[RMDB]
Structure probing data (DMS and 2A3) for a 207-nucleotide construct.

RNA sequence: GGGAACGACUCGAGUAGAGUCGAAAAAUGGAGGAGAUGUCCAUGAUUCUGGCACAGGGAGGGUUGCUGUGUGCAGCAAAAAGUGUCCAUUCAUGAUUACUGUGUUCUGAGUAGACAUUGCAGGCAAACGGCAAGUCUGGAUUAUUUAACUAAGAGCCAUAAACGGCGUUUUCGAACGCCGUUUAUGAAAAGAAACAACAACAACAAC
Reactivity to DMS in 0.01 (KOAc 150mM, MgCl2 10mM, bicine 150mM(pH8.5), 24C), signal-to-noise 1, nucleotides 027 to 156: a050u000g050g030a070g050g010a130g040a040u000g030u010c020c020a130u000g010a170u000u010c080u020g000g010c030a050c050a070g000g000g020a080g000g000g010u000u000g040c030u010g110u000g030u000g050c040a120g030c030a020a030a050a040a090g000u010g010u000c010c060a090u040u010c020a070u000g020a130u000u000a070c040u020g010u000g000u000u000c060u000g000a080g030u000a030g010a010c060a080u010u060g010c010a080g070g030c040a020a070a070c030g000g000c040a040a110g000u000c040u000g010g010a110u000u010a080u000u000u000a050a140c050u040a090a080g060a090g010c190
Reactivity to 2A3 in 0.01 (KOAc 150mM, MgCl2 10mM, bicine 150mM(pH8.5), 24C), signal-to-noise 3, nucleotides 027 to 156: a000u080g030g000a020g050g030a120g010a060u090g040u050c000c040a060u070g030a060u070u080c040u110g000g050c060a050c070a090g010g050g000a050g010g040g010u030u030g010c010u030g020u040g020u040g070c010a030g010c000a000a070a020a020a050g050u040g010u060c040c000a040u000u080c010a010u050g040a040u150u160a200c140u150g020u030g020u190u010c030u020g040a040g020u030a010g030a000c030a080u060u030g010c010a060g080g020c030a110a060a000c010g030g000c010a000a030g060u030c020u030g000g000a030u060u070a080u120u210u050a050a020c050u040a090a020g030a000g060c040
The DMS profile rests on 2,376 reads.
For 2A3 the reverse transcriptase was SuperScript II with manganese.
For DMS the reverse transcriptase was MarathonRT.
The reactions ran in a buffer of 150 mM KOAc, 10 mM MgCl2 and 150 mM bicine (pH 8.5), at 24 C.